This 177-nucleotide RNA was probed chemically with DMS. It was measured as part of the RMDB library OK2TRN. The reactions ran in a buffer of 150 mM KOAc, 10 mM MgCl2 and 150 mM bicine (pH 8.5), at 24 C. DMS adducts were read by reverse transcription with MarathonRT. High DMS reactivity at an A or C suggests that its Watson-Crick edge is free.
[RMDB]
RNA sequence: GGGAACGACUCGAGUAGAGUCGAAAACGAUCGGGAGAGAUAACGGGGAAAUCCCGUAUAACCCAAUAUAUCUGACAAGUCGCACUAUAUGUCAACCCAAGAUGCAUCUUCCUCUCCAGGACUUCGAAAGGAGUCGUUAUUUCGAUAACGACUCCUUAAAAGAAACAACAACAACAAC
Reactivity to DMS in 0.01 (KOAc 150mM, MgCl2 10mM, bicine 150mM(pH8.5), 24C), signal-to-noise 1, nucleotides 027 to 126: c200g010a030u000c130g000g010g010a080g010a070g010a140u010a150a030c020g010g000g000g000a060a120a120u010c000c010c010g010u010a020u000a100a170c000c020c010a060a120u030a100u000a080u000c060u010g000a050c070a040a100g010u010c090g000c100a040c120u050a120u010a030u000g000u000c050a010a060c030c010c030a100a070g020a070u010g040c100a030u010c030u010u020c030c010u010c050u020c020c030a110g010g010a150c110u000u000c020g020a110